[RMDB]
RNA sequence: GGGAACGACUCGAGUAGAGUCGAAAAAGGACCGAGCGAUUGUCGAUGGGAUGCGUGUGCGCAGCUGGUUCUCUGACUUCAAUGCUGACAAGUUCAAGUCGCCGGUAAAUAAGGAGGAGCCAAAAGCUUUCUCCUUGGUCAUGGAUGAAACGGAGUCGUAUGUGGUGAGGUUCGCCUCACCACAUACAAAAGAAACAACAACAACAAC
Reactivity to 2A3 in 0.01 (KOAc 150mM, MgCl2 10mM, bicine 150mM(pH8.5), 24C), signal-to-noise 1, nucleotides 027 to 156: a000g130g010a060c000c000g010a020g000c050g080a060u000u170g060u110c060g050a040u070g050g050g030a020u110g030c020g030u110g010u090g040c010g010c020a060g000c020u020g000g080u120u020c100u010c040u020g020a050c000u040u050c140a090a120u130g030c020u040g030a010c060a140a030g000u030u110c040a020a020g000u030c020g040c000c000g000g000u030a110a120a040u100a020a000g000g000a000g000g020a000g030c020c010a040a080a000a000g010c020u010u110u080c000u000c040c010u000u010g020g000u040c030a000u060g000g070a030u060g060a150a000a060c040g060g020a030g000u090c080
Structure probing data (2A3) for a 207-nucleotide construct. For 2A3 the reverse transcriptase was SuperScript II with manganese. Source: RMDB library OK3TST, as collected in RNAgym.